[RMDB]
RNA sequence: GGGAACGACUCGAGUAGAGUCGAAAACAUGUACUCAUAUGAUGCAGACGACUUCUCUUUUGUAAGGUAUGUGGAUCCUCUCACUGGAUUUACGUUGGACGAAUCUCCCAUGACUGAUAUGAGAUUAUCAAGGGCUACUGUUCGCAGUAGCCCUUGAAAAAGAAACAACAACAACAAC
Reactivity to DMS in 0.01 (KOAc 150mM, MgCl2 10mM, bicine 150mM(pH8.5), 24C), signal-to-noise 2, nucleotides 027 to 126: c080a030u030g050u000a140c080u000c010a080u010a000u000g000a040u040g040c090a000g000a070c110g030a060c130u010u000c040u000c030u010u000u000u010g050u010a100a100g000g000u060a020u000g020u000g000g000a040u000c020c010u010c150u000c100a080c100u010g000g000a030u000u000u020a020c030g000u000u000g000g000a030c110g000a040a110u000c050u000c000c040c040a110u010g030a090c070u000g000a170u010a040u000g010a040g000a200u000u010a100
Reactivity to 2A3 in 0.01 (KOAc 150mM, MgCl2 10mM, bicine 150mM(pH8.5), 24C), signal-to-noise 2, nucleotides 027 to 126: c040a080u150g020u180a060c000u000c000a020u100a020u230g140a070u140g040c080a010g040a090c010g100a110c070u030u020c030u080c000u070u000u020u050g230u220a070a080g110g020u210a080u160g070u010g000g000a010u000c060c000u010c000u000c020a120c090u010g000g040a010u010u000u060a070c080g000u050u170g000g040a040c050g020a040a050u000c020u020c000c000c030a110u100g080a130c030u000g010a000u010a020u130g020a060g000a060u080u100a070